[RMDB]
RNA sequence: GGGAACGACUCGAGUAGAGUCGAAAAUAUACUGAUGAAAGACCGGAGCGGCCCGGUUCAACGGGCUGCUCCUUUCACUUCAGCAUCUUAUCGCUGUAGCUUCUCAUAGCGCUUUAUGAGGCGCUCAUCAUCGUCAUCAUUUCGAUGAUGACGAUGAAAAAGAAACAACAACAACAAC
Reactivity to DMS in 0.01 (KOAc 150mM, MgCl2 10mM, bicine 150mM(pH8.5), 24C), signal-to-noise 2, nucleotides 027 to 126: u010a090u000a120c000u010g000a050u000g000a120a080a080g000a030c260c120g050g010a000g030c010g000g010c010c000c000g010g010u010u030c300a120a140c000g000g000g000c000u010g010c010u000c000c000u000u000u000c000a090c060u010u000c020a010g010c050a020u000c090u000u000a140u010c130g000c060u000g010u010a040g020c050u000u000c010u000c030a090u010a050g020c130g000c070u010u020u030a070u030g000a100g000g000c030g010c010u000c160a100